[RMDB]
RNA sequence: GGGAACGACUCGAGUAGAGUCGAAAAGGAAAUAAUGCACAUAAUCCAGUCGCAGACGCUAAAAAUAACGCUGCGUCGCGACGGAUGAGGCAACGCACACCGAAGUGCAAACGGUAGCGUAAAAAAAGUAUGUACAAUCGUUCGCGAUUGUACAUACAAAAGAAACAACAACAACAAC
Reactivity to DMS in 0.01 (KOAc 150mM, MgCl2 10mM, bicine 150mM(pH8.5), 24C), signal-to-noise 3, nucleotides 027 to 126: g020g000a150a060a090u000a140a070u000g030c020a070c030a030u000a300a080u000c000c000a090g020u000c000g010c000a110g020a020c000g000c010u000a000a090a090a060a090u010a070a050c230g000c140u000g020c010g000u000c000g010c010g000a000c020g000g000a010u010g010a180g000g020c020a090a060c000g000c030a050c100a080c010c000g020a070a080g000u010g010c160a040a030a090c040g010g000u000a080g000c000g000u020a000a000a040a070a020a080a060
Reactivity to 2A3 in 0.01 (KOAc 150mM, MgCl2 10mM, bicine 150mM(pH8.5), 24C), signal-to-noise 4, nucleotides 027 to 126: g090g040a090a090a050u190a080a060u130g010c040a040c010a300u180a120a020u010c000c050a060g000u010c010g020c070a100g000a010c000g000c030u110a090a060a020a100a150u250a160a060c100g030c220u070g000c010g000u000c000g000c010g000a000c000g000g000a000u000g000a010g030g000c030a030a010c000g000c000a040c000a000c060c010g050a150a020g210u220g110c000a090a090a000c020g000g020u030a020g000c000g000u110a060a060a000a000a040a000a020